[RMDB]
RNA sequence: GGGAACGACUCGAGUAGAGUCGAAAAUCGUGAGAUGUGGUGCCUCACGCGCUCGAGGCGUCCGUGGUCAGAGAGACCACUGACGCAAAAACUCGAGCGCAAAUAAAAAGCAUUACAUAAAGAAUAAAUGAUUAAUAGCAUUCGUGCUAUUAAUCAUAAAAGAAACAACAACAACAAC
Reactivity to 2A3 in 0.01 (KOAc 150mM, MgCl2 10mM, bicine 150mM(pH8.5), 24C), signal-to-noise 6, nucleotides 027 to 126: u150c050g020u030g030a060g000a060u260g010u010g010g000u010g000c000c000u030c010a040c070g000c000g000c000u010c000g000a000g000g000c000g000u000c010c000g000u000g000g000u000c040a030g110a050g030a010g000a300c000c000a000c000u000g000a000c000g000c000a030a100a030a030a030c000u000c000g000a000g000c000g000c000a000a010a000u090a000a050a010a020a010g000c000a000u010u030a000c000a000u190a040a140a040g190a080a080u210a180a150
Reactivity to DMS in 0.01 (KOAc 150mM, MgCl2 10mM, bicine 150mM(pH8.5), 24C), signal-to-noise 4, nucleotides 027 to 126: u020c100g020u020g000a040g010a060u000g010u000g000g010u000g010c010c020u000c080a080c100g020c010g000c000u010c010g000a030g010g000c010g000u000c000c080g000u000g000g000u000c000a210g020a160g000a200g010a000c020c000a000c020u000g000a010c010g010c040a060a010a070a080a300c010u000c000g000a020g000c000g020c000a020a020a050u010a050a040a050a060a110g000c000a000u000u010a000c010a060u030a070a120a110g010a130a060u040a060a120